[RMDB]
RNA sequence: GGGAACGACUCGAGUAGAGUCGAAAAGCAAGUCUGCCAAUUCAUCCGCUUCGUCCUUUUCUGGAGCAGUUGAGAUAGAGGGCUUGGAUACUGCAUCGGUGAUUGCAUCGACAUCGGUGUCUAAAGACUUUGUAACCAAUGAAGGAUGGACACAAGCUACUCCCACGUAAUUCGUUACGUGGGAGUAAAAAGAAACAACAACAACAAC
Reactivity to 2A3 in 0.01 (KOAc 150mM, MgCl2 10mM, bicine 150mM(pH8.5), 24C), signal-to-noise 4, nucleotides 027 to 156: g040c020a040a020g040u060c070u040g020c030c010a040a070u090u020c010a020u010c010c030g020c040u040u020c030g270u110c040c020u200u260u160u110c160u210g010g000a000g000c030a020g010u190u210g060a150g010a100u080a050g040a040g000g030g010c020u020u050g020g000a030u020a090c030u040g000c000a030u010c010g000g040u040g040a290u090u200g100c030a050u060c040g020a020c030a050u090c020g010g000u030g010u000c030u030a070a060a050g010a010c000u010u060u010g070u080a070a060c010c000a020a030u090g030a040a010g050g030a010u090g010g010a010c040a000c060a110a020g060c010
Reactivity to DMS in 0.01 (KOAc 150mM, MgCl2 10mM, bicine 150mM(pH8.5), 24C), signal-to-noise 2, nucleotides 027 to 156: g020c040a050a080g030u010c040u000g030c040c040a060a150u000u010c040a070u000c000c020g010c040u020u020c030g040u040c170c100u020u040u000u020c070u000g040g000a090g050c060a060g030u000u010g000a060g010a120u000a030g010a050g030g000g000c050u000u010g030g000a100u000a050c050u000g020c290a110u000c000g030g040u000g010a220u000u020g050c050a050u000c000g020a020c020a040u000c020g020g020u000g020u000c040u020a060a070a130g000a070c050u000u000u010g000u010a170a170c000c020a060a100u000g000a090a110g010g030a070u010g000g000a070c030a100c050a050a080g020c040